RNA sequence: GGGAACGACUCGAGUAGAGUCGAAAAGUACUACCGUUCGCGGUAGUACAAAUAAUCCAGCCUGGAAAGGCUGGAGCCAAUACUAUGGUAAAGGCACCAUAGAAAGAGCAGAGUUCGCUCUGCUCAAUCGUCUUAAUUCCUUCGGGAAUUAAGACGAAAAAGAAACAACAACAACAAC
Reactivity to DMS in 0.01 (KOAc 150mM, MgCl2 10mM, bicine 150mM(pH8.5), 24C), signal-to-noise 1, nucleotides 027 to 126: g000u000a010c000u000a010c000c000g000u000u000c150g010c050g000g020u010a010g010u000a000c000a000a080a110u010a240a140u000c000c010a010g060c010c000u010g000g030a170a080a020g000g000c000u000g000g000a010g040c010c020a080a140u000a150c020u000a010u000g000g000u000a070a200a230g000g000c150a050c010c000a030u000a020g030a010a090a050g020a020g010c000a000g010a000g010u000u000c300g010c010u010c000u000g020c020u010c000a070a100
Reactivity to 2A3 in 0.01 (KOAc 150mM, MgCl2 10mM, bicine 150mM(pH8.5), 24C), signal-to-noise 1, nucleotides 027 to 126: g000u030a000c000u000a000c010c000g070u060u080c290g000c030g120g010u000a010g000u010a010c010a000a010a000u100a000a000u000c000c000a010g000c020c000u040g050g160a150a070a020g010g000c000u000g000g000a000g040c030c000a060a010u120a130c010u040a000u010g000g010u040a020a220a150g160g030c070a000c010c000a000u000a000g100a060a170a000g000a010g020c010a010g000a010g000u020u120c150g060c060u010c000u020g000c010u010c000a000a030

About this RNA: An RNA of 177 nucleotides, treated with DMS and 2A3 and read out base by base. Conditions: 150 mM KOAc, 10 mM MgCl2 and 150 mM bicine (pH 8.5), 24 C. Reactivities are given for positions 27 through 126. For DMS the reverse transcriptase was MarathonRT. The data come from the RNA Mapping Database (RMDB), library M2PK50. For 2A3 the reverse transcriptase was SuperScript II with manganese.